Notes:
The record gives the reactivity of an RNA of 177 nucleotides to DMS. The reactions ran in a buffer of 150 mM KOAc, 10 mM MgCl2 and 150 mM bicine (pH 8.5), at 24 C. Source: RMDB library TTRDES, as collected in RNAgym.
[RMDB]
RNA sequence: GGGAACGACUCGAGUAGAGUCGAAAAAAAAAAAGAUAUGGAUGACUGCUAGGCUACGACCCGAGCACUGUAUCGGAAACGAUACAAACUCGCGUAGCCUUGGACCAGUCAUCCUAAGUCAAAAAAACUAUGCCUUCUUGUUCGCAAGAAGGCAUAGAAAAGAAACAACAACAACAAC
Reactivity to DMS in 0.01 (KOAc 150mM, MgCl2 10mM, bicine 150mM(pH8.5), 24C), signal-to-noise 1, nucleotides 027 to 126: a000a000a030a290a090a060a030g040a080u000a300u000g030g010a000u000g010a010c000u000g030c000u000a000g010g030c000u000a000c000g010a170c300c300c060g000a020g060c090a170c190u000g010u000a000u000c000g000g000a140a080a110c000g010a030u000a000c000a000a040a130c010u000c000g010c010g000u000a000g010c000c000u000u000g060g030a120c300c030a000g000u000c000a000u000c020c000u000a000a130g010u000c010a000a000a030a060a110a110a170